An RNA of 177 nucleotides, treated with DMS and read out base by base. The RNA was probed in 150 mM KOAc, 10 mM MgCl2 and 150 mM bicine (pH 8.5) at 24 C. Reactivities are given for positions 27 through 126.

[RMDB]
RNA sequence: GGGAACGACUCGAGUAGAGUCGAAAAGAUGAUGACAACGUAGGGUCAACUGGGCUGCAAAUGUCUGGAACCACCCCACGUACUCACCGGAUGAGAGCUCUACCAGGUCAAAAUACCUGGUUUAGUGCUAGCGAUUACACUUCGGUGUAAUCGCUAGAAAAGAAACAACAACAACAAC
Reactivity to DMS in 0.01 (KOAc 150mM, MgCl2 10mM, bicine 150mM(pH8.5), 24C), signal-to-noise 2, nucleotides 027 to 126: g010a180u030g000a060u010g040a040c130a070a050c010g040u000a070g000g050g000u000c020a010a130c020u020g010g010g010c010u000g000c280a070a130a170u000g000u000c030u000g000g000a030a170c240c300a020c000c000c000c030a010c010g010u000a100c170u000c000a010c010c000g000g000a290u010g010a120g000a120g000c010u000c050u000a010c000c000a010g000g010u000c150a090a110a050a150u010a100c000c000u000g000g000u000u000u000a020g040u000g010

The data come from the RNA Mapping Database (RMDB), library OK2TST.